[RMDB]
RNA sequence: GGGAACGACUCGAGUAGAGUCGAAAAUGUCCAACGAUACCGAUUGAAGAGUCAACGUCAAAUGUUCCGACACUAUGUCUAGUGUGCGGAACUAUCCUCUGCUCACAGGCAUAUUGCUGUCAGAAAAUCACUAUGCGACUUUCGAGUCGCAUAGUGAAAAAGAAACAACAACAACAAC
Reactivity to DMS in 0.01 (KOAc 150mM, MgCl2 10mM, bicine 150mM(pH8.5), 24C), signal-to-noise 3, nucleotides 027 to 126: u000g000u010c040c020a100a080c090g030a100u000a060c100c020g000a130u000u010g010a150a120g000a100g010u020c070a050a110c090g040u000c100a050a090a140u000g020u000u000c000c000g010a050c010a000c020u020a040u000g000u010c210u010a060g030u000g000u030g020c000g000g000a000a010c060u020a040u010c140c080u010c040u000g010c020u000c030a030c090a050g000g000c010a030u000a050u000u000g020c020u000g020u000c060a090g000a070a030a060a110
Reactivity to 2A3 in 0.01 (KOAc 150mM, MgCl2 10mM, bicine 150mM(pH8.5), 24C), signal-to-noise 2, nucleotides 027 to 126: u170g000u020c000c010a030a000c040g030a050u080a140c040c020g070a080u040u100g080a130a040g060a040g140u060c040a080a000c020g030u020c050a010a000a220u160g020u030u000c020c030g000a000c000a000c010u000a020u190g210u080c090u040a020g010u020g030u080g110c000g000g000a000a000c000u000a000u000c000c010u000c020u050g010c000u030c000a020c000a010g040g030c030a040u060a070u140u190g050c060u030g030u020c000a000g120a020a070a020a050